[RMDB]
Structure probing data (DMS) for a 177-nucleotide construct. Reactivities are given for positions 27 through 126. The RNA was probed in 150 mM KOAc, 10 mM MgCl2 and 150 mM bicine (pH 8.5) at 24 C. The DMS profile rests on 4,256 reads.
RNA sequence: GGGAACGACUCGAGUAGAGUCGAAAAGAUAUGGAGCAAGCAUUCCCGGCAUACUAGCUUGGACCCUCACCCAUCGGAAACGAUGGUUGAGGCUAGCUACUAUGCCGGGAAUGCUUGCUCCUAAGUCCAUCAUACUAGUCUUCGGACUAGUAUGAUGAAAAGAAACAACAACAACAAC
Reactivity to DMS in 0.01 (KOAc 150mM, MgCl2 10mM, bicine 150mM(pH8.5), 24C), signal-to-noise 2, nucleotides 027 to 126: g010a080u010a300u010g010g020a010g000c000a010a010g010c000a010u000u000c000c010c020g000g000c000a000u000a010c140u010a000g010c010u000u010g020g010a150c300c020c020u000c010a000c040c000c010a020u000c000g000g000a200a140a230c010g010a010u010g000g020u000u000g000a020g000g000c020u010a010g010c000u010a020c110u000a000u000g000c000c000g030g020g000a000a000u000g010c000u000u000g000c000u000c010c000u000a000a070g000u010c030